The record gives the reactivity of an RNA of 170 nucleotides to DMS and 2A3.
RNA sequence: GGGAACGACUCGAGUAGAGUCGAAAAACGCUCACCCCACGCAACAAGUGGAGUGGCGUUUCUGACUUGUCCCUCAAACAAAAACUCCUUUACACCUUCUAUGGUAAGGAGUCACUUGAGAACCCAACCAGGAUGUAGUUCGCUACAUCCAAAAGAAACAACAACAACAAC
Reactivity to DMS in 0.01 (KOAc 150mM, MgCl2 10mM, bicine 150mM(pH8.5), 24C), signal-to-noise 9, nucleotides 027 to 129: a000c020g000c000u120c020a030c000c010c000c000a020c030g080c140a130a150c220a180a110g000u010g000g000a000g020u000g000g000c010g000u000u000u000c080u030g050a050c050u000u070g050u040c030c040c030u050c090a090a100a090c110a020a050a000a050a020c020u030c020c010u030u050u110a080c140a050c050c000u090u150c120u060a110u220g010g030u010a030a020g010g000a020g020u000c000a030c040u020u040g020a040g010a120a070c010c010c010a090a080c120c110a100
Reactivity to 2A3 in 0.01 (KOAc 150mM, MgCl2 10mM, bicine 150mM(pH8.5), 24C), signal-to-noise 9, nucleotides 027 to 129: a010c020g000c040u180c040a010c010c010c020c000a000c000g100c030a060a300c060a300a090g010u000g000g000a000g000u000g000g000c000g000u000u000u000c030u040g060a040c010u040u110g060u090c020c040c000u040c060a150a170a080c060a030a090a020a010a010c000u020c010c000u060u120u170a110c080a060c050c020u230u200c120u280a120u300g010g000u020a000a000g000g000a000g000u000c000a020c020u020u020g010a010g010a050a030c010c000c010a020a050c030c040a060
For DMS the reverse transcriptase was MarathonRT. For 2A3, 205,139 sequencing reads were counted. For 2A3 the reverse transcriptase was SuperScript II with manganese. For DMS, 68,250 sequencing reads were counted.